[RMDB]
RNA sequence: GGGAACGACUCGAGUAGAGUCGAAAACACGAUCUCGUUGGCGGUCAGCUUCUCCGCGUGCACCUGCCCGUCCAGAUACACGUCGGUGUGCGCCACCAGCAGGUCCACUCCAAAUGUCGACCGACUGGGCGCGUGCCAAUUUCGAUUGGCACGCGCCAAAAGAAACAACAACAACAAC
Reactivity to 2A3 in 0.01 (KOAc 150mM, MgCl2 10mM, bicine 150mM(pH8.5), 24C), signal-to-noise 1, nucleotides 027 to 126: c140a030c090g060a070u010c010u010c080g030u010u010g040g000c000g000g000u100c170a040g020c000u220u100c000u020c000c040g000c020g010u000g000c000a020c010c000u010g030c040c200c070g070u090c050c000a040g000a050u100a030c020a000c040g210u300c030g090g020u030g000u020g040c000g000c000c000a010c000c000a000g000c000a000g000g000u000c000c000a010c040u070c060c050a000a040a110u110g000u000c020g100a140c090c000g060a020c030u060g010
Conditions: 150 mM KOAc, 10 mM MgCl2 and 150 mM bicine (pH 8.5), 24 C.
Structure probing data (2A3) for a 177-nucleotide construct.
Values cover nucleotides 27 to 126.
The data come from the RNA Mapping Database (RMDB), library OK1LIB.